[RMDB]
RNA sequence: GGGAACGACUCGAGUAGAGUCGAAAAUUGCAAGCCUUCGGGCUUGCAAGGUGUCGGAAAGCGGAAUAUAUAAUCCUCCGCUUAAGGAUUAUACCGACUUAAGUGCCAGGCUGUUCGCAGCCUGGAAUCUGUACUAUCGUUUCGACGAUAGUACAGAAAAAGAAACAACAACAACAAC
Reactivity to DMS in 0.01 (KOAc 150mM, MgCl2 10mM, bicine 150mM(pH8.5), 24C), signal-to-noise 5, nucleotides 027 to 126: u000u000g010c000a010a000g010c000c000u000u000c200g040g020g020c000u000u010g010c000a000a010g000g020u000g010u000c010g000g010a190a060a010g020c010g000g000a070a060u000a170u010a100u000a110a120u010c220c090u000c050c060g010c050u000u000a040a100g000g000a090u000u010a110u000a120c020c000g010a040c060u010u010a050a130g010u010g000c000c000a010g000g010c000u000g010u010u020c190g020c000a010g010c000c000u000g000g000a020a020
Reactivity to 2A3 in 0.01 (KOAc 150mM, MgCl2 10mM, bicine 150mM(pH8.5), 24C), signal-to-noise 3, nucleotides 027 to 126: u020u010g010c000a010a010g010c000c010u010u070c220g080g000g010c010u020u000g010c000a000a000g000g010u060g000u020c020g020g020a090a020a010g000c010g010g060a090a010u160a020u050a010u040a220a120u090c030c030u010c020c010g000c010u020u010a020a010g000g020a020u090u070a040u150a100c000c000g030a040c040u090u110a170a050g090u080g170c000c000a000g000g000c010u010g020u060u070c170g000c090a000g000c020c000u000g000g000a000a010
Chemical mapping of a 177-nucleotide RNA with DMS and 2A3. Source: RMDB library M2PK50, as collected in RNAgym. The reactions ran in a buffer of 150 mM KOAc, 10 mM MgCl2 and 150 mM bicine (pH 8.5), at 24 C. For DMS the reverse transcriptase was MarathonRT. For 2A3, 4,443 sequencing reads were counted.